[RMDB]
RNA sequence: GGGAACGACUCGAGUAGAGUCGAAAAGGAACAUCCUUCGGGAUGUUCCAUAGGCGGCGCCUCUCGCUAAGCGGCGCGCAGAGGCGCCCAGCGCAGCUUGAAAGUAAGCCUAGUUCGCUAGGCUUAACACAAAUUCAAGUUUCGACUUGAAUUUGUGAAAAGAAACAACAACAACAAC
Reactivity to DMS in 0.01 (KOAc 150mM, MgCl2 10mM, bicine 150mM(pH8.5), 24C), signal-to-noise 6, nucleotides 027 to 126: g000g000a030a010c000a000u000c000c000u000u020c190g020g020g010a010u010g000u000u000c000c000a030u000a030g010g020c100g020g010c010g020c000c010u000c000u000c040g010c020u010a090a130g010c160g010g010c300g010c110g000c180a010g010a020g010g010c000g000c000c000c010a020g000c070g010c090a050g010c070u000u000g000a090a080a150g000u010a020a010g010c000c000u000a010g010u000u010c190g010c010u000a000g000g000c000u000u000a010a150
Reactivity to 2A3 in 0.01 (KOAc 150mM, MgCl2 10mM, bicine 150mM(pH8.5), 24C), signal-to-noise 3, nucleotides 027 to 126: g000g010a000a000c030a000u000c020c010u050u070c220g040g010g010a000u010g000u000u020c000c000a010u010a000g080g020c050g010g000c020g000c020c000u010c000u000c010g020c030u030a130a100g190c080g190g000c040g020c000g000c070a000g010a000g000g000c010g000c010c010c000a000g000c070g000c020a090g030c030u080u160g080a100a050a050g090u100a010a010g000c000c000u020a010g020u040u050c150g020c080u000a000g000g000c000u000u010a000a000